Source information: Conditions: 150 mM KOAc, 10 mM MgCl2 and 150 mM bicine (pH 8.5), 24 C. The record gives the reactivity of an RNA of 207 nucleotides to 2A3 and DMS. It was measured as part of the RMDB library OK3TST. The DMS profile rests on 8,696 reads.

RNA sequence: GGGAACGACUCGAGUAGAGUCGAAAACGUGGCUGUUUGCUUAUACCGCAACGCAUGGCACGAUUGCGCACUCGAUUGGUUUGUACGUCGGUGGCGUGGCUAUCCCCUUUGUAGCGGAUCAGUUCAGUGCCAUCAUGAUUGUUACUACUUCGAUCGAACUGGACCAUAAUUUCGAUUAUGGUCCAGUAAAAGAAACAACAACAACAAC
Reactivity to 2A3 in 0.01 (KOAc 150mM, MgCl2 10mM, bicine 150mM(pH8.5), 24C), signal-to-noise 9, nucleotides 027 to 156: c030g000u030g070g050c030u030g040u090u050u080g040c030u130u090a090u130a190c080c040g010c020a020a030c050g040c100a120u120g050g000c040a010c060g070a120u050u170g040c080g010c020a050c060u050c010g040a060u040u070g040g080u110u090u160g030u060a010c010g010u010c000g000g010u010g020g010c020g010u010g000g000c000u000a010u010c030c010c010c000u050u200u280g180u190a020g010c060g020g000a020u030c090a020g020u250u190c040a030g100u040g160c070c000a000u000c010a030u150g040a030u050u240g040u160u060a020c020u010a030c030u060u120c030g060a060u080c030g030a050
Reactivity to DMS in 0.01 (KOAc 150mM, MgCl2 10mM, bicine 150mM(pH8.5), 24C), signal-to-noise 2, nucleotides 027 to 156: c050g000u000g030g040c000u010g000u000u010u010g010c000u000u010a160u010a110c080c030g010c040a110a030c040g000c040a060u000g020g020c100a100c060g020a160u020u010g010c050g030c050a110c100u010c010g010a030u000u000g030g020u000u000u000g020u000a030c030g030u000c030g000g020u000g000g020c020g000u010g010g040c020u010a150u000c000c010c030c050u000u000u010g010u010a080g020c150g010g010a030u000c100a020g030u000u010c030a090g030u000g030c000c020a020u000c020a070u020g020a040u000u010g020u000u000a030c010u000a060c050u000u010c000g020a040u000c060g000a070